Conditions: 150 mM KOAc, 10 mM MgCl2 and 150 mM bicine (pH 8.5), 24 C. Structure probing data (2A3) for a 207-nucleotide construct. Source: RMDB library OK3TST, as collected in RNAgym. Reactivities are given for positions 27 through 156.

RNA sequence: GGGAACGACUCGAGUAGAGUCGAAAAAGUCACUGGGCCAGGUCAUCCUGUGGAUGCAUAGAGGUAUCACUGGACCAGGUCAUCAUGUGGAUAUGGCAGUGACUGGACCAGAUCAUCCUAGGGAUAUAGGAGUCUCUGGGCCAGAUUAUCCUAUGGACUCCGUGACUACUUUCGAGUAGUCACGGAGAAAAGAAACAACAACAACAAC
Reactivity to 2A3 in 0.01 (KOAc 150mM, MgCl2 10mM, bicine 150mM(pH8.5), 24C), signal-to-noise 2, nucleotides 027 to 156: a010g070u060c030a020c030u000g010g020g020c000c010a010g010g000u020c040a180u100c070c020u020g070u140g220g040a060u100g000c020a040u180a230g200a110g020g020u050a010u060c040a040c050u020g000g020a000c010c010a030g000g120u000c040a050u000c000a030u050g020u070g090g030a020u020a100u130g080g030c040a060g020u000g040a020c000u000g000g000a010c000c000a020g010a020u040c090a040u000c010c030u050a080g140g070g000a040u040a040u030a300g110g000a050g060u000c060u000c000u080g020g000g000c000c000a020g000a020u030u090a040u120c020c020u030a030u090g030g020a030